[RMDB]
Background: This 177-nucleotide RNA was probed chemically with DMS and 2A3. For DMS the reverse transcriptase was MarathonRT.

RNA sequence: GGGAACGACUCGAGUAGAGUCGAAAACAACAAUACUUCGGUAUUGUUGAAAAUGGGCCGUCCAAGAAAAGUGCUUGAAAGAGUGGGAGCACUCGGCAAAAAAAACCAGUUGGUUCGCCAACUGGAACCUAACAGGUAGGUUCGCCUACCUGUUAGGAAAAGAAACAACAACAACAAC
Reactivity to DMS in 0.01 (KOAc 150mM, MgCl2 10mM, bicine 150mM(pH8.5), 24C), signal-to-noise 1, nucleotides 027 to 126: c000a000a040c000a010a000u000a000c020u000u010c120g050g000u000a000u000u000g020u000u010g000a020a020a070a070u000g000g030g030c020c020g010u000c060c060a090a100g010a040a120a120a060g020u000g000c010u000u010g020a110a060a130g010a100g010u000g000g000g000a030g000c000a000c010u000c030g000g000c000a000a000a000a080a050a080a040a060c000c010a010g000u000u000g010g000u000u000c180g020c000c000a000a000c000u000g010g000a010a040
Reactivity to 2A3 in 0.01 (KOAc 150mM, MgCl2 10mM, bicine 150mM(pH8.5), 24C), signal-to-noise 2, nucleotides 027 to 126: c000a000a000c000a010a020u010a000c000u060u050c160g050g000u000a000u000u000g000u000u010g030a020a010a000a090u090g020g070g040c030c000g030u000c040c030a080a000g150a060a090a010a010g050u020g000c000u080u050g100a190a180a030g130a060g080u250g070g130g000a030g010c000a000c000u010c040g040g000c000a050a000a000a010a030a000a000a080c020c000a010g000u010u010g030g050u020u060c230g010c070c010a000a010c030u000g000g000a010a010